Structure probing data (2A3 and DMS) for a 177-nucleotide construct. The reactions ran in a buffer of 150 mM KOAc, 10 mM MgCl2 and 150 mM bicine (pH 8.5), at 24 C. For DMS, 12,534 sequencing reads were counted. For DMS the reverse transcriptase was MarathonRT.

RNA sequence: GGGAACGACUCGAGUAGAGUCGAAAAAGUUUCUGAUGAAACUGACCUAAGACAGUAGGGGAGCAGUGCUCAUAAUAUUCCUACCGAGGCACAAAACGUCAUUAUAAAAUAACGUAUUGUACUUUCGACUAAUGUUAUGGUUCGCCAUAACAUUAGUAAAAGAAACAACAACAACAAC
Reactivity to 2A3 in 0.01 (KOAc 150mM, MgCl2 10mM, bicine 150mM(pH8.5), 24C), signal-to-noise 9, nucleotides 027 to 126: a010g020u030u020u000c070u180g300a300u250g000a020a000a010c010u020g040a040c010c000u030a120a020g080a080c040a030g020u020a000g010g010g000g020a010g000c100a080g180u050g160c010u000c020a010u030a050a010u080a090u300u300c000c000u000a010c010c000g010a010g000g000c020a000c000a020a030a020a010c010g020u010c020a030u040u200a170u090a220a240a060a030u070a020a010c010g010u020a030u050u020g020u020a020c010u100u150u070c030g020
Reactivity to DMS in 0.01 (KOAc 150mM, MgCl2 10mM, bicine 150mM(pH8.5), 24C), signal-to-noise 7, nucleotides 027 to 126: a020g000u000u000u000c000u020g000a210u010g010a010a000a010c000u000g010a160c000c000u010a070a080g010a090c190a110g000u000a010g000g000g000g000a020g020c010a150g010u010g020c000u000c000a030u000a010a010u010a120u010u000c010c000u000a020c020c010g000a020g010g010c020a010c000a010a010a090a010c010g000u000c040a020u010u000a190u020a120a080a050a030u000a040a010c000g020u000a070u000u000g010u000a030c010u000u000u010c040g010